[RMDB]
RNA sequence: GGGAACGACUCGAGUAGAGUCGAAAAUCCUCGGAUAAGAUGAGCUUCCGGGGCACGCUGAGCACCAGCUCAUCCUUGGCCAACGGUCGGGUGGCCCGCAGACCCAGUUGGUAGCCGGGAAAGAUGAACUAUGAAAAUGCUUCGGCAUUUUCAUAGUAAAAGAAACAACAACAACAAC
Reactivity to DMS in 0.01 (KOAc 150mM, MgCl2 10mM, bicine 150mM(pH8.5), 24C), signal-to-noise 4, nucleotides 027 to 126: u000c020c000u000c020g000g020a110u000a080a110g000a030u010g000a030g000c010u000u000c150c100g010g000g000g030c060a030c150g010c160u010g010a150g020c040a120c030c030a070g000c010u000c010a030u000c010c060u000u010g020g000c000c010a010a030c030g020g010u000c110g020g020g030u000g010g010c040c000c050g000c100a100g000a080c010c010c070a120g010u000u000g000g010u010a090g010c000c010g000g000g000a060a060a120g000a110u000g000a120
Reactivity to 2A3 in 0.01 (KOAc 150mM, MgCl2 10mM, bicine 150mM(pH8.5), 24C), signal-to-noise 2, nucleotides 027 to 126: u040c010c010u020c010g000g000a060u070a150a100g030a020u030g000a010g000c000u110u000c080c050g010g030g010g010c050a030c090g170c170u170g080a010g030c000a010c020c010a020g010c010u000c000a010u010c030c000u050u110g090g000c010c000a030a020c040g050g120u060c050g050g010g050u060g080g040c010c010c010g000c010a010g030a060c000c020c000a050g020u010u020g040g010u030a030g020c010c000g010g010g040a000a090a060g120a040u150g050a010